[RMDB]
RNA sequence: GGGAACGACUCGAGUAGAGUCGAAAAAGUACGUACCAUAUCGCACAGUAUGCGCUGCGACUCGUCCGCUGACCCGUAUGCGUCUCUGCCUUCUGCGACGGACCUUCUGUCAGGUACCUCAUGCGCGGUUCUAGCACCGUAUUCCGAUGGGCCGAAGAAACUAUUCAAUUUUCGAAUUGAAUAGUUUAAAAGAAACAACAACAACAAC
Reactivity to DMS in 0.01 (KOAc 150mM, MgCl2 10mM, bicine 150mM(pH8.5), 24C), signal-to-noise 4, nucleotides 027 to 156: a070g010u010a030c040g020u000a080c010c030a100u000a080u010c060g010c040a080c040a120g010u000a270u010g010c040g020c000u010g010c030g000a060c020u010c040g010u000c030c030g000c020u000g010a100c040c030c030g020u000a080u000g020c080g020u000c020u000c040u000g020c030c030u000u000c100u000g020c010g000a120c040g010g010a050c020c000u000u000c040u000g000u000c060a070g020g010u000a030c020c020u000c040a070u000g020c050g010c050g030g000u000u000c090u000a130g000c040a090c030c010g030u000a120u000u000c040c040g020a120u010g020g010g020c030c020g000a100a130g000
Reactivity to 2A3 in 0.01 (KOAc 150mM, MgCl2 10mM, bicine 150mM(pH8.5), 24C), signal-to-noise 8, nucleotides 027 to 156: a000g120u110a040c060g020u040a060c020c060a060u030a050u150c060g020c020a050c020a080g070u110a060u140g050c070g010c040u030g010c010g060a050c030u030c050g070u050c040c040g000c070u060g060a080c020c010c030g040u100a070u190g030c020g050u020c020u010c010u080g030c010c010u100u070c040u100g020c030g030a030c030g040g020a040c010c010u090u080c040u050g100u090c060a030g030g010u090a180c000c010u040c020a060u150g010c050g000c020g040g010u040u050c090u100a040g030c030a020c020c010g030u040a110u100u040c030c020g060a070u100g020g020g000c000c020g030a060a030g080